[RMDB]
RNA sequence: GGGAACGACUCGAGUAGAGUCGAAAACAGUGCAGUACGGAUCGCGAUCACAUGAUGGUACCUACAUGGAGCACUAGCUAGUCUAGGUACGAUACUAGCGUACUGAUCUACAUGGUCACUAUCGUACCUCGGAUAUCGCUUUCGAGCGAUAUCCGAGAAAAGAAACAACAACAACAAC
Reactivity to DMS in 0.01 (KOAc 150mM, MgCl2 10mM, bicine 150mM(pH8.5), 24C), signal-to-noise 3, nucleotides 027 to 126: c110a060g060u010g060c010a100g000u010a040c120g010g000a020u010c150g030c070g020a080u000c070a090c150a100u000g000a080u010g000g030u010a030c030c030u000a060c080a070u000g000g000a210g010c030a070c040u000a070g000c010u000a060g000u000c080u000a060g010g000u000a010c000g000a010u000a020c080u000a020g010c070g010u010a080c100u000g000a020u000c000u000a090c190a110u000g000g010u000c040a050c190u000a010u000c010g000u010a010c010
Reactivity to 2A3 in 0.01 (KOAc 150mM, MgCl2 10mM, bicine 150mM(pH8.5), 24C), signal-to-noise 2, nucleotides 027 to 126: c030a030g030u020g080c000a030g050u080a040c110g090g020a090u100c070g010c050g070a070u070c020a030c030a180u200g020a040u070g110g000u030a050c000c010u060a060c030a070u120g110g000a080g030c030a000c060u000a040g000c000u040a030g010u030c020u030a030g000g040u040a010c030g000a000u030a040c000u010a010g040c030g080u070a040c050u050g060a030u000c030u100a260c070a190u240g000g000u030c030a020c060u040a040u040c000g010u040a030c000